[RMDB]
RNA sequence: GGGAACGACUCGAGUAGAGUCGAAAACGGACGGGAUUUUAGCCUGGUUGCAAGUUUACCCAUUUCGUGCUGGGUCCUGGACCCAGUUAAGAUAAUAGAAAUAUUAUCGAUUUCUUUACCGUCCGGACACCUCGGGAGUAUUCGUACUCCCGAGGUGAAAAGAAACAACAACAACAAC
Reactivity to DMS in 0.01 (KOAc 150mM, MgCl2 10mM, bicine 150mM(pH8.5), 24C), signal-to-noise 1, nucleotides 027 to 126: c000g000g010a010c000g020g000g020a120u020u000u000u010a140g010c030c040u000g020g010u000u010g000c020a120a090g010u000u000u000a180c000c000c030a160u000u000u030c200g000u030g010c040u020g000g000g000u010c030c170u020g030g040a050c010c000c000a010g010u000u000a040a240g000a020u000a000a000u000a000g000a230a060a110u000a000u000u000a010u000c000g000a160u000u030u000c090u020u040u000a140c010c000g000u000c000c000g020g000a200
This 177-nucleotide RNA was probed chemically with DMS. The DMS profile rests on 1,008 reads. DMS adducts were read by reverse transcription with MarathonRT. The data come from the RNA Mapping Database (RMDB), library OK2TRN.